[RMDB]
RNA sequence: GGGAACGACUCGAGUAGAGUCGAAAAGCGCUUAAAUUAAAUUUCCCUUGCUGAGCUCAUCUCAGCAAACAAUAACAAAUAACAAAUAUGAACAGCAGGGAAGGCUGUUCUUAUUUGUUACAAUAAAACUUUACCUAAGGUUCGCCUUAGGUAAAGUAAAAGAAACAACAACAACAAC
Reactivity to 2A3 in 0.01 (KOAc 150mM, MgCl2 10mM, bicine 150mM(pH8.5), 24C), signal-to-noise 4, nucleotides 027 to 126: g070c070g040c140u170u180a060a120a110u140u130a070a080a100u090u240u040c000c010c030u000u000g000c000u000g010a020g010c050u070c100a180u130c080u000c000a000g000c000a010a010a000c010a010a050u200a060a030c060a090a080a040u050a030a000c010a000a020a000u020a000u020g000a000a000c000a000g020c020a010g200g070g130a080a040g110g010c000u010g000u000u010c000u000u000a000u020u010u000g000u000u000a010c000a000a090u160a070a080a000
Reactivity to DMS in 0.01 (KOAc 150mM, MgCl2 10mM, bicine 150mM(pH8.5), 24C), signal-to-noise 2, nucleotides 027 to 126: g010c170g010c130u000u000a050a070a140u000u010a010a100a140u000u010u010c000c000c000u010u010g010c000u010g000a010g000c260u020c250a110u020c000u000c000a010g000c010a010a030a050c140a050a110u000a060a060c110a060a120a170u000a010a000c000a010a010a030u000a000u000g010a010a020c000a000g000c000a070g000g010g020a100a100g000g000c000u000g000u000u000c000u000u000a000u000u000u000g000u000u000a020c080a040a060u000a020a050a050
This 177-nucleotide RNA was probed chemically with 2A3 and DMS. 2A3 adducts were read by reverse transcription with SuperScript II with manganese.